The record gives the reactivity of an RNA of 207 nucleotides to 2A3. 2A3 adducts were read by reverse transcription with SuperScript II with manganese. Conditions: 150 mM KOAc, 10 mM MgCl2 and 150 mM bicine (pH 8.5), 24 C. It was measured as part of the RMDB library M2RFPK.

RNA sequence: GGGAACGACUCGAGUAGAGUCGAAAAGAAAGAAAGAAAGAAAUCUGACAGAAUGACGGAUUCGAUCGUUGUGGUCGGCGGGCCACCACGUCAUUCCUUCGCACUGUCUCCGCGCAGACCGCCAUAAAAAAGCGGAUCUACUUCGGUAGAUCCGCAAGAGCAAUCUAGAGUUCGCUCUAGAUUGCUCAAAAGAAACAACAACAACAAC
Reactivity to 2A3 in 0.01 (KOAc 150mM, MgCl2 10mM, bicine 150mM(pH8.5), 24C), signal-to-noise 2, nucleotides 027 to 156: g050a030a080a000g050a050a120a020g110a030a080a010g070a030a090a010u080c070u080g000a030c030a050g170a170a170u100g040a050c030g010g010a030u090u080c110g040a040u210c050g030u080u040g000u000g000g000u010c040g010g050c030g000g030g010c010c010a000c000c010a000c010g010u040c010a020u040u040c020c000u020u060c040g010c010a010c010u020g020u010c010u010c040c030g030c000g000c040a010g050a130c020c000g050c020c020a080u280a060a130a020a030a040a010g000c000g000g000a000u010c000u000a020c000u030u050c060g040g000u000a000g000a000u020c000c000g000c000a000a000